[RMDB]
RNA sequence: GGGAACGACUCGAGUAGAGUCGAAAACGGGAAACUGGGGAUAAUACCGGAUGGAUCACUAGUGCUGGAAUGCUUGGUGGUCGAAAGGCAACGCCUUUGGAUGGGUCUGCGGCGGAUUAGGUUGACGCUAAUAGUUCCCCUUCGGGGGAACUAUUAGAAAAGAAACAACAACAACAAC
Reactivity to 2A3 in 0.01 (KOAc 150mM, MgCl2 10mM, bicine 150mM(pH8.5), 24C), signal-to-noise 5, nucleotides 027 to 126: c060g010g010g010a030a110a090c100u080g030g000g010g020a030u060a130a050u080a250c020c000g030g000a060u100g120g010a020u050c020a010c030u040a030g130u020g180c010u040g040g150a140a070u170g010c020u020u030g020g000u000g000g010u030c030g020a040a000a000g020g000c020a090a080c130g020c000c020u020u060u060g110g000a110u060g000g020g000u050c030u060g000c010g020g000c030g030g010a050u100u080a040g030g020u000u030g010a010c040g000
Reactivity to DMS in 0.01 (KOAc 150mM, MgCl2 10mM, bicine 150mM(pH8.5), 24C), signal-to-noise 4, nucleotides 027 to 126: c090g010g000g000a040a060a100c110u010g000g030g000g000a110u000a070a070u020a070c040c040g000g010a160u010g000g000a020u020c010a030c030u000a030g010u030g020c000u000g000g050a130a070u020g000c020u000u000g000g020u010g010g000u010c000g000a020a100a070g000g010c040a070a150c190g010c020c010u000u010u010g000g000a110u020g000g010g010u000c050u000g000c090g030g000c040g000g010a090u000u020a080g010g020u000u000g010a130c150g010
An RNA of 177 nucleotides, treated with 2A3 and DMS and read out base by base. The reactions ran in a buffer of 150 mM KOAc, 10 mM MgCl2 and 150 mM bicine (pH 8.5), at 24 C. Source: RMDB libraries RFM100 and RFMREP, as collected in RNAgym. For DMS the reverse transcriptase was MarathonRT. 2A3 adducts were read by reverse transcription with SuperScript II with manganese.